[RMDB]
This 207-nucleotide RNA was probed chemically with 2A3 and DMS. Conditions: 150 mM KOAc, 10 mM MgCl2 and 150 mM bicine (pH 8.5), 24 C. Source: RMDB library OK3TST, as collected in RNAgym.
RNA sequence: GGGAACGACUCGAGUAGAGUCGAAAAUGAAAACAAAUCUAUCCUUUACCUCUUGGUGAUCAGCAUGACAUUCGCUUUGCCCCACGAGAUGCAUGUUUGCUUCAUCCAUGACGUAGGGGGCAACAGUAUAUAAACUUCCACAACAUCCGCAAACACAACAACCUAUCCAAUUCGUUGGAUAGGUUGUAAAAGAAACAACAACAACAAC
Reactivity to 2A3 in 0.01 (KOAc 150mM, MgCl2 10mM, bicine 150mM(pH8.5), 24C), signal-to-noise 3, nucleotides 027 to 156: u130g010a030a030a010a040c090a020a060a030u060c030u080a080u090c010c010u060u090u050a050c020c010u030c010u040u060g030g000u020g030a030u040c030a010g020c020a010u030g080a110c010a050u020u080c080g020c050u080u070u110g010c010c000c010c000a070c050g040a090g010a040u040g000c020a010u010g080u120u150u100g070c070u050u060c000a030u020c040c020a040u060g020a040c030g020u030a070g010g050g000g000g000c010a010a000c000a010g020u010a030u000a000u040a120a070a020c040u060u020c020c020a060c020a130a090c040a090u080c080c040g060c050a040a120a070c200a010c010a170
Reactivity to DMS in 0.01 (KOAc 150mM, MgCl2 10mM, bicine 150mM(pH8.5), 24C), signal-to-noise 2, nucleotides 027 to 156: u010g000a040a070a120a150c050a070a110a130u010c050u010a090u000c020c010u020u000u010a090c010c010u010c030u000u000g020g020u000g030a130u000c030a050g010c040a050u000g020a240c010a100u020u000c050g040c030u010u000u010g010c030c040c030c120a100c010g040a150g040a040u000g000c050a060u000g010u000u000u000g050c090u000u000c020a070u000c030c030a060u000g030a120c060g010u000a170g050g000g000g040g010c040a020a040c070a040g020u020a130u000a090u000a070a070a080c050u000u010c020c020a050c010a060a110c050a090u000c030c000g070c040a070a050a070c080a070c050a150